[RMDB]
RNA sequence: GGGAACGACUCGAGUAGAGUCGAAAAAGGGCGGUGAAAUCCGCAAGGUGAAAUGGGAGGGCCGCCACGGUGCGCCGGACCGUAUCGCCAUGCUGCCCAACGGGCGCACCCUGUGGGUGGAACUCAAACCCAUACCCCUGUUCGCAGGGGUAUGGGUAAAAGAAACAACAACAACAAC
Reactivity to DMS in 0.01 (KOAc 150mM, MgCl2 10mM, bicine 150mM(pH8.5), 24C), signal-to-noise 1, nucleotides 027 to 126: a080g020g040g050c010g020g000u010g000a100a220a130u020c000c000g040c110a010a040g010g000u010g040a130a100a040u050g000g000g000a120g000g000g000c000c030g000c050c000a090c130g020g000u020g000c030g000c020c010g020g000a110c100c050g070u000a010u020c090g050c040c040a000u020g020c080u050g000c040c020c000a170a060c100g050g020g000c030g020c000a070c010c010c300u020g010u000g000g020g060u040g000g000a070a040c040u000c040a080a130
Reactivity to 2A3 in 0.01 (KOAc 150mM, MgCl2 10mM, bicine 150mM(pH8.5), 24C), signal-to-noise 2, nucleotides 027 to 126: a000g120g000g000c030g000g140u150g000a020a050a130u050c000c040g000c080a000a110g030g070u130g010a000a100a160u180g040g050g010a050g000g000g010c020c000g000c000c050a000c050g000g020u050g000c050g050c060c010g050g050a070c060c050g080u100a110u050c010g000c040c000a000u110g000c040u100g010c000c040c000a000a060c020g020g030g000c040g000c000a010c010c000c050u100g010u150g040g010g070u050g000g000a080a050c000u030c020a060a080
This 177-nucleotide RNA was probed chemically with DMS and 2A3. The DMS profile rests on 1,719 reads.